[RMDB]
RNA sequence: GGGAACGACUCGAGUAGAGUCGAAAAAUGGCUAAAGCAGUCGCUAAUCCUUGAGGAUUCCUGAUAUUUAAGACAUGAGCCACAAGCUAAUUUUGACCCGUGUGAGACUAAGGGCACCUGCUUUCUCAUUGCAGUGUCUUUGCCAGUAAUAUAAAUACUCCCCAUUUAAUUUCGAUUAAAUGGGGAGAAAAGAAACAACAACAACAAC
Reactivity to 2A3 in 0.01 (KOAc 150mM, MgCl2 10mM, bicine 150mM(pH8.5), 24C), signal-to-noise 2, nucleotides 027 to 156: a000u090g010g000c000u080a070a000a040g090c030a040g020u040c010g020c090u020a000a030u030c020c000u070u140g110a180g070g030a100u040u010c050c030u070g040a040u110a080u180u100u140a120a010g030a000c010a020u060g050a000g060c000c000a020c040a070a020g040c020u110a100a130u040u090u100u070g080a070c000c000c000g020u050g020u010g050a180g020a080c100u070a010a040g000g000g020c000a010c020c060u010g010c010u070u160u120c090u050c020a080u100u150g000c040a000g000u020g000u010c000u020u040u020g010c000c000a000g020u060a080a030u130a030u150a040a020a260u300a070
Reactivity to DMS in 0.01 (KOAc 150mM, MgCl2 10mM, bicine 150mM(pH8.5), 24C), signal-to-noise 2, nucleotides 027 to 156: a040u000g000g020c030u020a040a060a100g010c040a110g040u000c040g050c060u020a050a070u000c020c010u010u020g010a210g020g000a100u000u000c020c020u000g000a110u000a040u000u000u000a070a150g020a090c020a040u000g000a060g020c000c000a030c140a060a070g000c070u020a080a140u010u000u010u010g000a070c060c010c020g050u010g010u000g000a210g000a100c040u000a060a080g020g010g020c030a040c040c020u010g000c010u000u000u000c120u010c040a160u010u000g000c040a100g000u000g030u000c030u000u000u000g020c000c030a090g040u010a040a070u000a140u020a040a040a130u010a220